An RNA of 207 nucleotides, treated with 2A3 and read out base by base. 2A3 adducts were read by reverse transcription with SuperScript II with manganese. The RNA was probed in 150 mM KOAc, 10 mM MgCl2 and 150 mM bicine (pH 8.5) at 24 C. Reactivities are given for positions 27 through 156.

[RMDB]
RNA sequence: GGGAACGACUCGAGUAGAGUCGAAAAUCAUGAUAGAAUUGAAAAACAGACACCUGUGUCACAAUUUAUUGUGACACCUACUAUGCAUGCAGUUUACACAGGUACAACACAGAGUGGUCAUUAUAUGAUUGAAGAUUGCAUUCAUGAUUACUGUGUGCGGUACAAGUUUCUUCGGAAACUUGUACCGAAAAGAAACAACAACAACAAC
Reactivity to 2A3 in 0.01 (KOAc 150mM, MgCl2 10mM, bicine 150mM(pH8.5), 24C), signal-to-noise 2, nucleotides 027 to 156: u080c000a030u030g000a020u040a110g070a060a120u100u160g040a140a170a020a000a050c130a110g080a040c030a010c100c030u050g000u000g000u000c000a000c010a020a040u100u230u300a200u110u150g010u010g010a000c010a020c020c010u100a040c000u070a000u110g050c020a020u030g020c010a020g020u050u050u120a020c040a000c050a040g060g030u080a030c030a050a000c000a060c010a020g050a000g080u050g040g000u000c020a000u030u070a080u030a070u140g070a070u030u150g030a040a030g070a090u050u300g000c030a020u050u030c000a000u020g020a000u070u000a070c020u060g000u010g010u000g090